RNA sequence: GGGAACGACUCGAGUAGAGUCGAAAAGAUAUGGAAAUACAUAUUGACAUGCUUAGUCGGUCGGAAACGACCGCUAAGCAACAGCAAUGUAUUUCCUAAGUCAAAGUAUCCAGUUCGCUGGAUACAACAUGCCUGAUAACUUCGGUUAUCAGGCAUGAAAAGAAACAACAACAACAAC
Reactivity to 2A3 in 0.01 (KOAc 150mM, MgCl2 10mM, bicine 150mM(pH8.5), 24C), signal-to-noise 2, nucleotides 027 to 126: g000a000u020a020u050g010g020a010a010a000u040a010c030a010u230a100u210u110g070a060c140a290u300g040c000u000u020a010g140u300c110g040g000u020c020g000g050a020a030a030c000g010a010c000c000g050c000u000a000a020g000c020a000a000c020a020g020c000a010a010u020g000u010a000u010u000u000c000c000u000a020a000g020u000c040a000a120a240g010u010a000u030c000c000a010g000u050u070c300g000c130u010g000g000a010u030a010c000a000a020
Reactivity to DMS in 0.01 (KOAc 150mM, MgCl2 10mM, bicine 150mM(pH8.5), 24C), signal-to-noise 2, nucleotides 027 to 126: g000a020u000a170u010g000g000a010a000a000u000a000c000a040u010a300u030u000g000a070c110a160u000g010c010u000u000a010g010u010c050g020g030u010c000g030g000a020a020a060c030g010a010c000c020g000c000u000a000a000g020c020a020a010c140a080g020c070a080a010u010g000u000a010u000u000u000c000c000u010a010a120g010u000c020a150a180a160g010u000a010u000c000c000a000g000u000u050c220g030c010u000g000g010a010u000a000c010a120a210